[RMDB]
RNA sequence: GGGAACGACUCGAGUAGAGUCGAAAAAGUUUGUGCAGAAGGACUCGGUUAUGCGCACGCUCUGUGGCACACCUCUCUACGUUGCCCCUGAGGUGCUGAUUACCGGCGGCCGAGAAGCCUACACCAAGUUUCAGAACCAUUUCGAUGGUUCUGAAACAAAAGAAACAACAACAACAAC
Reactivity to DMS in 0.01 (KOAc 150mM, MgCl2 10mM, bicine 150mM(pH8.5), 24C), signal-to-noise 2, nucleotides 027 to 126: a080g010u000u010u000g030u000g040c020a050g000a230a090g000g010a160c020u000c020g010g020u000u000a060u000g040c190g000c020a020c000g000c050u020c010u010g010u010g040g030c010a060c190a050c140c110u000c170u000c160u010a050c260g000u000u010g000c020c010c030c040u000g030a040g000g000u000g010c040u010g020a080u000u000a000c010c070g020g000c170g000g010c000c010g000a080g000a220a200g010c000c000u000a040c040a140c040c030a080a110
Reactivity to 2A3 in 0.01 (KOAc 150mM, MgCl2 10mM, bicine 150mM(pH8.5), 24C), signal-to-noise 1, nucleotides 027 to 126: a050g080u090u140u060g100u130g020c060a020g010a150a010g020g010a000c000u020c020g010g020u070u070a010u080g190c110g000c000a010c010g300c010u030c000u000g040u090g030g010c020a020c040a060c060c000u090c060u150c100u180a100c090g200u230u130g030c030c000c000c020u000g040a000g000g000u010g040c020u050g010a090u000u120a030c020c000g010g030c040g040g000c000c010g100a040g030a000a010g040c010c000u000a040c000a020c030c010a080a030

Source: RMDB library OK2TRN, as collected in RNAgym. An RNA of 177 nucleotides, treated with DMS and 2A3 and read out base by base. For 2A3, 868 sequencing reads were counted. The RNA was probed in 150 mM KOAc, 10 mM MgCl2 and 150 mM bicine (pH 8.5) at 24 C. For DMS, 1,114 sequencing reads were counted.